The record gives the reactivity of an RNA of 207 nucleotides to DMS and 2A3. For DMS the reverse transcriptase was MarathonRT. For 2A3, 1,384 sequencing reads were counted. Conditions: 150 mM KOAc, 10 mM MgCl2 and 150 mM bicine (pH 8.5), 24 C. For 2A3 the reverse transcriptase was SuperScript II with manganese.
[RMDB]
RNA sequence: GGGAACGACUCGAGUAGAGUCGAAAAAUUCGGGCAGGCACACGACGAAGAAGACUUUGGUGCGGGAAUAGCAGGCGAAGAACCAAACGCUCAGACCCUUCAGCAGCUCCUCCAUCUCCUCUUUGUUUUUUAUCCACGUCGAGAACUGCUGAAAACCACUAGCUGUUAAAUUCGUUUAACAGCUAGUAAAAGAAACAACAACAACAAC
Reactivity to DMS in 0.01 (KOAc 150mM, MgCl2 10mM, bicine 150mM(pH8.5), 24C), signal-to-noise 1, nucleotides 027 to 156: a220u000u000c030g030g010g020c020a110g020g060c040a040c050a090c070g000a160c060g010a120a080g020a120a120g010a030c030u010u010u000g020g050u000g050c020g000g000g000a060a060u000a030g010c030a000g000g040c070g020a110a070g000a110a080c020c040a040a130a080c160g030c020u000c030a070g010a150c030c000c050u000u000c000a020g000c020a010g000c030u010c050c000u000c030c030a090u000c070u000c020c060u000c040u010u000u020g010u010u000u010u000u000u000a050u030c000c030a100c090g010u000c090g010a090g010a030a030c010u010g000c010u000g010a070a030a050a060c050c050
Reactivity to 2A3 in 0.01 (KOAc 150mM, MgCl2 10mM, bicine 150mM(pH8.5), 24C), signal-to-noise 2, nucleotides 027 to 156: a010u090u080c040g000g010g020c010a010g020g000c000a000c000a000c040g130a000c040g010a050a020g040a100a010g010a020c000u020u020u040g030g000u020g010c020g000g000g010a000a010u020a010g000c000a000g040g000c070g020a050a000g040a050a010c050c010a180a000a030c030g010c000u030c010a040g060a190c040c000c000u040u020c010a040g000c000a000g010c020u060c020c000u010c080c040a090u030c040u060c080c020u090c020u100u080u030g110u040u240u020u000u100u080a060u070c030c030a090c130g060u050c020g050a010g000a060a020c000u010g000c000u020g010a000a020a040a040c020c010